[RMDB]
RNA sequence: GGGAACGACUCGAGUAGAGUCGAAAAAAUAAGAGUUUGGAUUAACCUAUAGGCAAUUAGCGAUCAAGAAUACAACCUAAGGACCUGGUUGACUUAAUUAUUCCAUAGGUUGGUGGAAGCUAGCGAAAUAUUCUCUGUUUUUCGAAACAGAGAAUAUAAAAGAAACAACAACAACAAC
Reactivity to DMS in 0.01 (KOAc 150mM, MgCl2 10mM, bicine 150mM(pH8.5), 24C), signal-to-noise 5, nucleotides 027 to 126: a040a060u000a080a070g010a060g010u000u000u000g010g010a130u000u000a030a060c040c020u000a080u010a070g010g000c300a090a050u000u000a030g010c030g000a060u000c050a040a050g010a100a110u010a070c060a050a040c070c080u010a050a070g000g000a080c300c170u000g010g010u000u010g000a090c070u000u010a040a020u000u010a080u000u000c000c010a080u000a010g010g020u000u000g000g020u000g010g010a040a110g000c040u010a030g010c120g000a060a070
Reactivity to 2A3 in 0.01 (KOAc 150mM, MgCl2 10mM, bicine 150mM(pH8.5), 24C), signal-to-noise 2, nucleotides 027 to 126: a000a010u300a070a030g060a020g000u080u030u050g010g020a010u060u040a020a030c000c000u010a020u020a150g060g050c010a040a070u060u020a060g000c020g030a010u060c040a040a030g010a170a010u120a130c020a060a060c040c020u110a080a170g090g010a020c020c110u000g060g000u070u090g040a100c020u080u050a030a050u100u080a100u220u060c010c010a020u010a030g000g030u020u040g020g080u040g060g030a000a000g030c000u030a020g070c060g030a250a000